[RMDB]
RNA sequence: GGGAACGACUCGAGUAGAGUCGAAAAGAUAUGGAGAUGUGACAGGCGACGAUCUGGUCGGUCGGAAACGACCGCCAGGGAGCCUGCACAUCUCCUAAGUCAAAAGUCCGGUCUUCGGACCGGACAAGUAAUUAACUGGGUUCGCCCAGUUAAUUACAAAAGAAACAACAACAACAAC
Reactivity to 2A3 in 0.01 (KOAc 150mM, MgCl2 10mM, bicine 150mM(pH8.5), 24C), signal-to-noise 1, nucleotides 027 to 126: g010a020u080a040u130g010g000a020g000a020u000g020u010g080a190c000a000g000g020c000g040a300c040g000a100u000c010u000g000g100u300c160g020g000u000c020g020g040a030a080a010c000g000a000c000c000g000c000c000a000g000g000g010a000g040c000c000u000g000c010a000c010a000u000c000u010c000c000u000a000a010g000u030c000a120a040a020a060g000u000c000c020g050g030u020c020u050u130c300g120g000a040c000c000g000g000a000c010a010a000
Reactivity to DMS in 0.01 (KOAc 150mM, MgCl2 10mM, bicine 150mM(pH8.5), 24C), signal-to-noise 2, nucleotides 027 to 126: g010a040u000a300u010g000g010a010g010a020u000g000u010g010a180c020a020g010g020c000g010a080c280g000a010u020c000u000g000g010u000c050g060g000u000c010g000g010a080a100a200c000g020a020c000c000g030c010c010a010g000g000g000a020g030c010c010u010g010c010a000c000a010u010c000u010c000c000u000a000a050g000u010c030a120a150a150a210g000u000c010c010g020g010u000c000u010u010c250g020g010a010c000c000g000g000a010c000a000a060
Annotation: Structure probing data (2A3 and DMS) for a 177-nucleotide construct. The RNA was probed in 150 mM KOAc, 10 mM MgCl2 and 150 mM bicine (pH 8.5) at 24 C. 2A3 adducts were read by reverse transcription with SuperScript II with manganese. The DMS profile rests on 2,748 reads. It was measured as part of the RMDB library TTRDES. For DMS the reverse transcriptase was MarathonRT.